[RMDB]
RNA sequence: GGGAACGACUCGAGUAGAGUCGAAAAGGGUGAUGUCUCCUAACCUUUAUCAAUGGGGGCACUCGGUCGUGCUGUGGGUAGAAAUUUUAAUUCGUGCCUACCUUAGACGCUUGUCGUCGGGAGUAUGUGGGACUGAUGAACUUCGGUUCAUCAGUAACUCGUUAAACUGUUUCGACAGUUUAACGAGAAAAGAAACAACAACAACAAC
Reactivity to DMS in 0.01 (KOAc 150mM, MgCl2 10mM, bicine 150mM(pH8.5), 24C), signal-to-noise 3, nucleotides 027 to 156: g000g010g020u010g000a070u010g020u000c000u010c000c010u000a150a080c060c010u000u000u000a140u020c120a090a090u010g010g050g010g010g010c030a050c050u000c020g020g010u010c020g020u000g010c040u000g030u010g010g020g020u010a120g000a060a070a110u020u000u000u000a030a300u000u010c050g020u000g010c020c010u000a070c040c070u000u000a110g010a060c050g010c050u000u000g070u000c020g010u000c000g000g010g040a160g000u010a050u010g000u010g010g010g000a090c000u000g010a030u000g010a020a010c010u000u010c290g070g000u000u000c000a000u000c000a010g000u000a020a250
Reactivity to 2A3 in 0.01 (KOAc 150mM, MgCl2 10mM, bicine 150mM(pH8.5), 24C), signal-to-noise 7, nucleotides 027 to 156: g040g000g000u080g030a080u030g020u010c010u010c020c000u040a080a080c020c010u080u210u140a220u170c120a100a080u150g000g000g000g000g000c010a010c020u030c030g030g000u030c020g020u040g050c030u060g020u060g010g010g020u040a030g160a030a070a030u150u200u140u180a120a150u120u110c050g020u080g020c000c000u020a050c010c000u030u050a070g010a020c000g010c060u140u250g110u290c010g000u000c000g010g020g020a070g020u090a080u160g050u100g020g020g020a000c000u000g000a000u000g000a000a000c010u030u050c170g040g000u000u000c000a000u000c000a000g000u000a000a010

Source information: The record gives the reactivity of an RNA of 207 nucleotides to DMS and 2A3. For 2A3 the reverse transcriptase was SuperScript II with manganese. It was measured as part of the RMDB library M2RFPK. For DMS the reverse transcriptase was MarathonRT. The DMS profile rests on 6,634 reads. Conditions: 150 mM KOAc, 10 mM MgCl2 and 150 mM bicine (pH 8.5), 24 C.